Conditions: 150 mM KOAc, 10 mM MgCl2 and 150 mM bicine (pH 8.5), 24 C. An RNA of 177 nucleotides, treated with 2A3 and DMS and read out base by base. The DMS profile rests on 883 reads. It was measured as part of the RMDB library OK1LIB.
[RMDB]
RNA sequence: GGGAACGACUCGAGUAGAGUCGAAAAAAUUGGCCAGAAGAUUCAAGACUAUGUCAAAGAGCACGAAAAGACAACAGCCGGCAUGGCGACAGCUGUCUUUGACAAAGACGGCACUAUCUAUCAAGGAUAAUUUACCUCGCUUCGGCGAGGUAAAUUAAAAAGAAACAACAACAACAAC
Reactivity to 2A3 in 0.01 (KOAc 150mM, MgCl2 10mM, bicine 150mM(pH8.5), 24C), signal-to-noise 1, nucleotides 027 to 126: a000a000u180u010g040g070c090c000a080g060a100a000g030a030u090u050c000a010a010g030a090c030u020a010u150g000u000c000a050a050a050g020a050g000c110a000c060g020a000a000a300a000g020a000c070a080a010c010a140g000c000c000g210g220c130a150u080g000g000c000g000a100c000a070g000c000u050g000u000c000u090u000u000g040a050c000a010a010a010g080a000c000g030g100c010a010c070u110a090u090c000u000a080u070c080a300a000g050g000a000
Reactivity to DMS in 0.01 (KOAc 150mM, MgCl2 10mM, bicine 150mM(pH8.5), 24C), signal-to-noise 1, nucleotides 027 to 126: a030a000u030u000g000g000c040c000a000g020a100a040g010a040u000u040c040a130a140g000a300c070u000a130u100g020u020c050a040a040a050g010a000g050c070a030c180g000a080a010a120a040g000a130c180a110a230c110a290g000c000c070g030g040c110a180u040g000g000c000g000a110c250a060g000c010u000g000u000c000u000u000u000g000a060c260a060a020a050g010a040c070g140g000c050a040c050u020a090u050c040u020a090u030c080a080a160g000g110a140